[RMDB]
RNA sequence: GGGAACGACUCGAGUAGAGUCGAAAAUCAUCGAGUGCACCAUCUCCUUCACAAUCGCCAUUGCCACCGGACGACGAUUCCCUUCGGCAGCAGCGGAAGGAGGAACAGAAGGCACAGUUGGUGGCAGCACCUGGAGGAGGUUCGCCUCCUCCAGGUGAAAAGAAACAACAACAACAAC
Reactivity to 2A3 in 0.01 (KOAc 150mM, MgCl2 10mM, bicine 150mM(pH8.5), 24C), signal-to-noise 2, nucleotides 027 to 126: u050c000a000u040c030g070a060g040u010g030c030a090c060c000a090u040c010u020c000c020u030u070c030a060c060a180a230u160c070g000c030c010a110u080u090g020c030c000a000c030c030g050g000a030c020g020a000c020g070a140u100u080c040c000c050u070u100c060g090g000c030a070g090c030a000g000c030g050g010a000a000g040g010a020g010g000a050a020c000a030g200a150a080g050g040c030a000c030a050g030u080u050g010g030u010g000g110c040a040g020
Reactivity to DMS in 0.01 (KOAc 150mM, MgCl2 10mM, bicine 150mM(pH8.5), 24C), signal-to-noise 2, nucleotides 027 to 126: u000c030a010u000c050g020a100g010u010g020c010a120c070c060a100u000c020u000c000c010u010u000c020a150c110a150a180u000c120g020c020c120a170u000u010g010c000c000a020c030c050g000g050a130c040g000a060c050g000a140u000u000c020c000c010u000u000c130g020g020c020a090g010c160a120g000c070g000g000a020a010g010g000a040g000g000a070a040c180a090g020a070a060g000g000c050a010c040a110g030u000u010g010g010u000g010g000c040a110g010
Conditions: 150 mM KOAc, 10 mM MgCl2 and 150 mM bicine (pH 8.5), 24 C. An RNA of 177 nucleotides, treated with 2A3 and DMS and read out base by base. The DMS profile rests on 1,363 reads. It was measured as part of the RMDB library OK2TST. For DMS the reverse transcriptase was MarathonRT. 2A3 adducts were read by reverse transcription with SuperScript II with manganese. For 2A3, 1,841 sequencing reads were counted.